RNA sequence: GGGAACGACUCGAGUAGAGUCGAAAAUGAACGUGCGUACAUCUCUCUCAGACUGUACGACAGUCUGACUCUCUCGCACUCUAGUACCACGAGAGAGAGAGAGCGUUGGAACUAGGGUGAAAUGAAACCUUGAUGAUUGUUUCGACAAUCAUCAAGGAAAAGAAACAACAACAACAAC
Reactivity to 2A3 in 0.01 (KOAc 150mM, MgCl2 10mM, bicine 150mM(pH8.5), 24C), signal-to-noise 3, nucleotides 027 to 126: u170g010a080a020c080g090u160g030c030g010u120a020c040a090u010c010u000c000u000c020u020c040a040g010a170c070u010g040u100a100c070g090a040c040a000g040u000c030u050g020a020c010u000c000u000c000u000c030g020c030a020c000u050c000u010a010g010u010a090c000c040a010c040g020a050g000a030g000a000g000a000g030a010g010a050g050c020g060u100u130g050g040a040a010c010u010a010g030g010g000u010g040a050a070a090u180g030a090a020a010
Reactivity to DMS in 0.01 (KOAc 150mM, MgCl2 10mM, bicine 150mM(pH8.5), 24C), signal-to-noise 4, nucleotides 027 to 126: u020g000a050a080c100g010u000g020c060g010u010a030c070a070u000c030u000c020u000c040u000c030a160g010a050c100u000g030u000a080c140g010a120c050a040g010u010c000u010g000a110c040u000c000u010c010u010c020g000c050a020c020u010c020u000a020g000u000a100c030c040a100c040g000a030g000a060g000a080g010a050g000a030g020a070g010c070g010u010u000g030g000a110a040c030u000a020g000g000g010u010g010a080a080a070u010g000a100a130a080